[RMDB]
RNA sequence: GGGAACGACUCGAGUAGAGUCGAAAAGGAAGGAGAAGUGUCUUCCCGGCACUGCUGUGGGCCCAGGACAUCUGCUGCAUGGAGGCAGGGGCAUGGAUGAAAAGACACAGAUGACCUGAUGGAAUGGCUGAUAGUUGUACUUCGGUACAACUAUCAGAAAAGAAACAACAACAACAAC
Reactivity to DMS in 0.01 (KOAc 150mM, MgCl2 10mM, bicine 150mM(pH8.5), 24C), signal-to-noise 5, nucleotides 027 to 126: g020g010a130a050g000g010a060g010a180a080g010u000g010u000c020u000u000c020c010c020g000g020c030a040c050u010g020c050u000g020u000g020g010g000c050c130c030a060g000g010a100c060a060u000c010u000g010c100u010g020c090a130u010g000g010a150g010g020c040a050g010g000g010g010c050a050u010g010g000a130u010g000a080a040a070a090g000a120c060a050c030a060g000a100u000g000a090c020c020u000g000a130u010g020g010a080a080u010g010g010
Reactivity to 2A3 in 0.01 (KOAc 150mM, MgCl2 10mM, bicine 150mM(pH8.5), 24C), signal-to-noise 2, nucleotides 027 to 126: g070g000a030a030g040g110a070g010a140a030g050u010g030u010c000u030u060c030c010c000g000g000c010a080c070u090g000c050u050g030u150g100g020g010c040c030c000a030g010g030a050c000a060u040c050u060g020c030u040g000c040a110u140g060g100a040g080g000c030a020g030g020g000g000c040a040u050g030g010a060u060g060a040a040a060a010g030a010c030a000c000a050g040a020u070g030a040c000c010u030g030a080u080g070g040a130a050u100g120g000